[RMDB]
RNA sequence: GGGAACGACUCGAGUAGAGUCGAAAAGGAUUCCGUCAGUAACGGCGAGUGAAGACGGAGUAGCCCAAGGUUCAAUCCUGGAUCUCUUCGAGGUCAGGAGAUUUAACCUAAGGACUGGGGGAACUCGUCGGUGUUGAGAGUUCGCUCUCAACACCGAAAAAGAAACAACAACAACAAC
Reactivity to 2A3 in 0.01 (KOAc 150mM, MgCl2 10mM, bicine 150mM(pH8.5), 24C), signal-to-noise 2, nucleotides 027 to 126: g050g000a040u000u000c000c000g010u000c020a000g020u100a070a000c020g130g040c110g050a040g000u030g040a090a070g050a010c000g000g040a000g000u000a000g030c010c000c010a050a000g000g000u030u050c000a030a030u040c020c020u130g170g040a020u020c030u000c080u200u250c210g000a000g010g030u020c000a030g040g060a040g010a020u000u000u000a010a000c010c000u020a060a040g050g000a010c070u080g050g020g000g000g020a050a020c010u010c000g030
Reactivity to DMS in 0.01 (KOAc 150mM, MgCl2 10mM, bicine 150mM(pH8.5), 24C), signal-to-noise 2, nucleotides 027 to 126: g000g010a000u010u000c000c010g000u000c010a060g000u070a130a020c070g010g010c100g000a210g010u000g000a160a140g000a050c010g000g000a040g040u000a030g050c000c000c000a160a060g000g000u000u000c220a070a130u000c010c000u010g040g000a010u000c000u000c010u000u020c250g000a010g020g050u010c000a080g000g000a030g000a090u020u000u000a030a020c030c030u000a180a100g000g000a030c060u000g000g000g000g000g000a140a060c000u000c130g040

The data come from the RNA Mapping Database (RMDB), library RFM100. The record gives the reactivity of an RNA of 177 nucleotides to 2A3 and DMS. Conditions: 150 mM KOAc, 10 mM MgCl2 and 150 mM bicine (pH 8.5), 24 C.